[RMDB]
RNA sequence: GGGAACGACUCGAGUAGAGUCGAAAACAGCAGCACCGCGGUCUCCCCACACCACCUUCCCCUCUUUUGCUUCUUCUUCUUGUUGCUUGUGCUGCUGCGGCUGCGGUGGUGGCCGCGUGAGAGUGAGAAAAUGCACCCCGUUCGCGGGGUGCAUUUUAAAAGAAACAACAACAACAAC
Reactivity to DMS in 0.01 (KOAc 150mM, MgCl2 10mM, bicine 150mM(pH8.5), 24C), signal-to-noise 1, nucleotides 027 to 126: c030a070g000c130a000g130c070a000c010c070g000c100g000g000u020c050u000c020c030c010c050a030c150a080c000c030a050c000c000u070u000c050c000c000c140u000c020u080u000u000u000g050c000u000u000c010u010u000c020u070u000c010u000u000g070u020u020g100c040u000u040g030u010g090c040u000g060c000u010g000c100g000g020c040u000g100c140g000g000u020g000g060u050g000g010c020c000g000c020g000u020g000a170g000a120g000u000g000a220g000

The record gives the reactivity of an RNA of 177 nucleotides to DMS. The RNA was probed in 150 mM KOAc, 10 mM MgCl2 and 150 mM bicine (pH 8.5) at 24 C. Values cover nucleotides 27 to 126. Source: RMDB library OK1LIB, as collected in RNAgym.